[RMDB]
RNA sequence: GGGAACGACUCGAGUAGAGUCGAAAAGCUUUACUGUUCGCAGUAAAGCAAAGAGUCGGUGGCCGGACCGGCCGGACCAAUAUAGAAAAACAAAAAGAAAAAAAACAAUCUAGUUCGCUAGAUUGAAGAAAUGUUUAAUGUUCGCAUUAAACAUUUCAAAAGAAACAACAACAACAAC
Reactivity to 2A3 in 0.01 (KOAc 150mM, MgCl2 10mM, bicine 150mM(pH8.5), 24C), signal-to-noise 1, nucleotides 027 to 126: g000c000u000u000u020a000c000u010g010u050u080c160g000c060a020g000u020a000a000a040g000c000a030a110a000g000a010g010u030c010g000g070u050g030g150c090c000g090g120a050c040c070g040g030c040c000g020g050a030c000c000a070a020u200a010u040a170g160a080a130a020a020a000c060a070a100a050a040a040g160a070a050a040a010a010a000a010a000c010a000a010u000c010u000a020g030u020u000c060g010c020u010a010g000a030u020u010g020a010a030
Reactivity to DMS in 0.01 (KOAc 150mM, MgCl2 10mM, bicine 150mM(pH8.5), 24C), signal-to-noise 1, nucleotides 027 to 126: g020c000u000u000u000a000c020u020g030u000u020c210g000c020a000g030u000a020a000a010g010c000a100a100a070g010a140g010u000c000g000g000u000g040g010c080c130g000g000a080c110c060g000g000c000c010g000g010a090c030c030a130a060u020a090u000a120g000a050a060a020a090a120c080a040a050a040a040a100g040a000a000a030a050a060a060a050a130c000a000a000u000c000u000a000g000u010u010c190g060c000u000a000g000a000u010u000g010a070a090